Annotation:
Structure probing data (2A3) for a 207-nucleotide construct. It was measured as part of the RMDB library RNAMAK. The RNA was probed in 150 mM KOAc, 10 mM MgCl2 and 150 mM bicine (pH 8.5) at 24 C.

[RMDB]
RNA sequence: GGGAACGACUCGAGUAGAGUCGAAAAGCGUACUACUAACGAUAUUUGGCUUGGAUUUAUAGGUCUCUAGCGUGGAAGCUCCCAAAUAGGAGCUUCUCGGGCCUAUUGUCAGCCAAAUUUCGUUAGUAUCGCAAACAAGUUACUUCGGUAACUUGAAACGUCCUGUACAGUUCGCUGUACAGGACGUAAAAGAAACAACAACAACAAC
Reactivity to 2A3 in 0.01 (KOAc 150mM, MgCl2 10mM, bicine 150mM(pH8.5), 24C), signal-to-noise 2, nucleotides 027 to 156: g000c010g010u080a070c030u000a000c000u000a030a000c000g000a000u000a010u030u000u000g020g020c020u080u160g180g020a070u170u300u050a030u040a010g040g010u020c010u010c140u300a060g150c090g150u240g080g000a000a000g000c000u000c000c000c010a090a140a000u300a040g000g000a010g020c000u000u010c010u020c020g000g000g010c020c000u050a010u010u010g000u000c000a000g040c010c020a000a000a000u000u000u010c010g000u000u000a000g000u000a000u000c000g030c000a000a020a000c000a000a000g010u000u000a000c000u040u140c290g100g000u010a000a000c000u010u020g040a050a050